[RMDB]
RNA sequence: GGGAACGACUCGAGUAGAGUCGAAAAAAGUGAUUAUUCGUAAUCACUUCACGCCGGGCGCGGUGGCGGGUGCCUGUAGUCCCAGCUACUCGGGAGGCUAAACGACGUACCCGUUCGCGGGUACGAACAUAUCUCGGUUUUUCGAAACCGAGAUAUGAAAAGAAACAACAACAACAAC
Reactivity to 2A3 in 0.01 (KOAc 150mM, MgCl2 10mM, bicine 150mM(pH8.5), 24C), signal-to-noise 3, nucleotides 027 to 126: a000a020g010u010g000a010u030u030a030u050u080c150g050u060a010a000u000c000a000c000u040u040c100a090c060g020c030c020g000g010g010c030g010c010g020g010u000g000g010c010g010g030g010u020g020c030c000u040g040u060a030g010u010c000c000c010a010g020c030u230a190c020u060c080g030g000g000a000g000g020c040u060a080a070a040c060g120a010c010g000u000a010c010c020c000g010u030u030c250g000c020g040g020g000u020a000c000g010a010a000
Reactivity to DMS in 0.01 (KOAc 150mM, MgCl2 10mM, bicine 150mM(pH8.5), 24C), signal-to-noise 5, nucleotides 027 to 126: a020a000g010u000g000a010u000u000a020u000u020c160g020u000a000a000u000c000a000c000u000u000c100a120c160g010c020c000g020g020g020c020g020c030g000g020u000g010g000c010g010g000g010u000g010c020c010u000g010u000a060g000u000c010c000c010a040g000c020u000a090c050u020c090g010g000g000a070g010g010c030u010a040a060a080c170g000a210c020g000u000a000c000c000c010g020u010u000c160g020c010g010g000g010u000a000c000g000a050a140